[RMDB]
RNA sequence: GGGAACGACUCGAGUAGAGUCGAAAAGGGCUUGAGCCAUCGCCCGAAUAAGAUGGAUGAUACAAGUCGACAUCGUACGCGACAUAGAACGUACUCAUUGAAGUGCGAAAGCACGAAGUCCGACGAGUCUGGGACGAUCAUCAGGCAAGACUUAGAACAUAUCGACGACGUUCGCGUCGUCGAUAUGAAAAGAAACAACAACAACAAC
Reactivity to 2A3 in 0.01 (KOAc 150mM, MgCl2 10mM, bicine 150mM(pH8.5), 24C), signal-to-noise 1, nucleotides 027 to 156: g020g000g000c030u060u060g080a000g100c010c030a030u020c000g000c050c000c040g020a050a090u230a070a150g050a020u110g010g000a010u060g000a040u100a120c110a120a000g000u000c000g010a010c000a120u000c020g000u060a120c000g100c130g100a000c060a180u220a060g120a020a000c000g020u000a000c000u000c060a240u110u300g080a040a020g000u000g000c010g040a070a090a000g130c080a000c070g090a000a000g010u050c080c000g000a000c000g000a040g050u000c010u000g030g010g000a010c010g040a050u000c000a010u010c000a000g120g000c050a080a060g030a080c000u040u060a010g020a110a000